RNA sequence: GGGAACGACUCGAGUAGAGUCGAAAAGGAGUGCUACCGAAAGGUAGCACUCCAACAAAUCGGUGUAAGUGCAGCCCGCAUUACACCGUGCGGCACAGCGGAAACGCUGAUGUCGUAUAAAGGGCUAUGGAUAUUACCAGUUCGCUGGUAAUAUCCAAAAAGAAACAACAACAACAAC
Reactivity to DMS in 0.01 (KOAc 150mM, MgCl2 10mM, bicine 150mM(pH8.5), 24C), signal-to-noise 1, nucleotides 027 to 126: g000g000a060g020u000g000c010u000a000c000c000g000a130a120a150g020g020u000a020g000c000a000c010u000c000c000a050a020c080a030a060a040u030c010g020g000u000g000u000a000a040g030u010g030c110a130g000c010c000c000g020c040a130u000u000a000c000a000c000c000g030u000g010c020g000g000c000a010c010a000g020c020g000g000a100a090a150c010g020c000u000g020a070u000g040u000c000g060u020a040u010a040a130a110g000g010g000c060u020a270
The record gives the reactivity of an RNA of 177 nucleotides to DMS.
Conditions: 150 mM KOAc, 10 mM MgCl2 and 150 mM bicine (pH 8.5), 24 C.
It was measured as part of the RMDB library OK2TRN.
Reactivities are given for positions 27 through 126.
DMS adducts were read by reverse transcription with MarathonRT.